[RMDB]
RNA sequence: GGGAACGACUCGAGUAGAGUCGAAAAGAUAUGGAGCCUAUUAAGGGAGUAACGUGUCGGAAACGACACGUUUACGAGGAUCUUAUAGGCUCCUAAGUCAAAACGCCAUCGGUUCGCCGAUGGCGAACCGUAUACAAUGCUUCGGCAUUGUAUACGGAAAAGAAACAACAACAACAAC
Reactivity to DMS in 0.01 (KOAc 150mM, MgCl2 10mM, bicine 150mM(pH8.5), 24C), signal-to-noise 3, nucleotides 027 to 126: g010a020u000a120u010g000g000a020g010c000c000u000a010u010u020a010a020g020g020g010a190g030u000a020a000c000g020u000g010u000c000g020g000a030a030a060c000g020a000c000a000c000g000u000u010u010a010c010g010a160g010g010a110u000c000u000u000a030u000a010g000g000c000u000c000c000u000a000a060g010u000c010a070a090a140a220c020g000c000c010a000u000c000g010g010u010u020c290g040c000c000g000a020u000g000g000c000g010a010a030
Reactivity to 2A3 in 0.01 (KOAc 150mM, MgCl2 10mM, bicine 150mM(pH8.5), 24C), signal-to-noise 5, nucleotides 027 to 126: g020a000u030a010u060g010g000a000g010c010c010u020a030u180u300a060a030g070g050g040a300g090u000a010a000c010g010u000g010u000c000g000g010a020a000a010c020g000a000c000a000c030g010u010u020u010a000c000g000a130g180g100a120u020c000u010u010a000u000a020g000g000c000u010c000c000u000a000a000g000u000c000a000a020a060a120c010g000c000c000a000u010c010g000g150u090u120c300g070c160c000g000a000u000g010g010c000g000a000a010

Source: RMDB library TTRDES, as collected in RNAgym. An RNA of 177 nucleotides, treated with DMS and 2A3 and read out base by base. For 2A3, 14,989 sequencing reads were counted. High DMS reactivity at an A or C suggests that its Watson-Crick edge is free. Values cover nucleotides 27 to 126. 2A3 adducts were read by reverse transcription with SuperScript II with manganese. The reactions ran in a buffer of 150 mM KOAc, 10 mM MgCl2 and 150 mM bicine (pH 8.5), at 24 C.